[RMDB]
RNA sequence: GGGAACGACUCGAGUAGAGUCGAAAAGGGAGAGCCGAGCAGAGGCAUAGCGAACUGCGCACGGGGAAGCCUUGAGGGAAUGCCGUAGGACCCGGGUUCGAUUCCCGGCGGCUCCACCGAAGGGCCAACUACCACUAGUGUUCGCACUAGUGGUAGUAAAAGAAACAACAACAACAAC
Reactivity to 2A3 in 0.01 (KOAc 150mM, MgCl2 10mM, bicine 150mM(pH8.5), 24C), signal-to-noise 9, nucleotides 027 to 126: g030g020g010a080g010a010g030c020c020g010a020g010c040a010g030a050g080g030c070a070u110a040g070c050g050a070a060c030u060g010c030g010c030a070c050g010g000g000g040a030a030g020c000c020u050u040g040a080g020g020g010a070a080u150g030c010c010g040u080a090g070g150a100c020c010c000g000g000g000u040u080c040g020a040u050u060c010c000c000g000g000c010g000g000c000u050c040c020a050c010c000g000a030a030g020g000g000c000c010a010
Reactivity to DMS in 0.01 (KOAc 150mM, MgCl2 10mM, bicine 150mM(pH8.5), 24C), signal-to-noise 8, nucleotides 027 to 126: g020g000g010a120g000a100g000c030c040g000a130g010c030a050g010a110g000g010c050a090u030a100g010c050g010a100a100c060u010g010c030g010c080a110c080g000g000g010g010a090a130g010c010c010u000u010g010a280g010g000g000a080a050u020g000c030c040g020u020a100g010g000a150c160c030c000g000g000g010u000u010c200g000a300u030u020c000c000c000g000g000c050g010g000c000u000c060c130a240c030c020g000a150a060g000g000g000c010c080a110
Chemical mapping of a 177-nucleotide RNA with 2A3 and DMS. The 2A3 profile rests on 15,959 reads. Conditions: 150 mM KOAc, 10 mM MgCl2 and 150 mM bicine (pH 8.5), 24 C.